[RMDB]
Structure probing data (2A3) for a 207-nucleotide construct. Reactivities are given for positions 27 through 156.

RNA sequence: GGGAACGACUCGAGUAGAGUCGAAAACCAACAACGAUUACGAAUACGCAAUGGCAGCCUAAUUAGGCUUGCCGCACUGAUUGGCUGACGUCAGAUACGCCGACCAGUGACAAACUUAUCCGACUGGCACCCAAAGCCGUCUGUCGCAGCGGGUGUAGGCAGAUAUUGUCUUCGGACAAUAUCUGCCAAAAGAAACAACAACAACAAC
Reactivity to 2A3 in 0.01 (KOAc 150mM, MgCl2 10mM, bicine 150mM(pH8.5), 24C), signal-to-noise 1, nucleotides 027 to 156: c000c000a000a070c010a010a010c080g170a110u270u200a020c070g140a080a100u300a190c050g000c140a060a160u100g000g000c000a020g000c000c000u160a300a280u270u150a060g000g050c010u000u140g020c020c000g000c000a000c000u000g020a020u000u000g000g000c000u020g050a000c000g030u000c000a000g010a030u010a020c020g000c000c010g000a000c000c000a000g000u000g040a080c140a050a060a000c010u080u110a050u050c000c000g000a010c010u100g040g000c000a000c000c000c000a000a000a000g000c040c040g130u030c210u160g160u300c090g000c000a010g000c000g000g040g000u030g000u000a000
Conditions: 150 mM KOAc, 10 mM MgCl2 and 150 mM bicine (pH 8.5), 24 C. Source: RMDB library ARCHII, as collected in RNAgym.